Conditions: 150 mM KOAc, 10 mM MgCl2 and 150 mM bicine (pH 8.5), 24 C. An RNA of 177 nucleotides, treated with 2A3 and DMS and read out base by base. For 2A3 the reverse transcriptase was SuperScript II with manganese.

[RMDB]
RNA sequence: GGGAACGACUCGAGUAGAGUCGAAAAGACCUACCGUGAUGAACUGAAAAAGAUUCAAAGUAGCGGUUUGAGCAAUGUGUAUAGACAGUAACCCGGUAAAAUGUACUGAAAAUAGGGAUAAGAGUUGGUUUAGAUGAAACUUCGGUUUCAUCUAAACAAAAGAAACAACAACAACAAC
Reactivity to 2A3 in 0.01 (KOAc 150mM, MgCl2 10mM, bicine 150mM(pH8.5), 24C), signal-to-noise 1, nucleotides 027 to 126: g040a030c000c000u040a000c000c030g030u060g050a300u040g000a050a000c020u050g100a080a020a120a010a120g120a150u030u030c000a080a000a040g050u050a020g050c030g040g000u030u080u110g050a020g050c020a050a080u090g050u000g000u080a050u050a090g060a020c030a000g020u040a020a030c030c010c010g000g030u060a050a070a080a080u100g030u050a030c000u030g080a060a060a060a000u090a030g030g000g010a010u070a110a050g100a020g150u130u030g100
Reactivity to DMS in 0.01 (KOAc 150mM, MgCl2 10mM, bicine 150mM(pH8.5), 24C), signal-to-noise 3, nucleotides 027 to 126: g000a160c010c010u010a050c040c020g010u010g010a160u000g010a020a050c050u000g000a030a090a140a120a060g020a090u010u000c000a040a050a170g030u000a200g020c020g000g000u000u000u010g010a070g010c050a030a040u000g010u000g020u010a060u000a110g000a130c030a040g010u000a060a130c030c020c020g010g000u010a050a030a070a050u010g020u000a040c090u000g000a050a050a070a050u000a060g010g010g020a090u010a060a080g010a080g010u000u010g010
The DMS profile rests on 1,957 reads. The 2A3 profile rests on 735 reads. For DMS the reverse transcriptase was MarathonRT.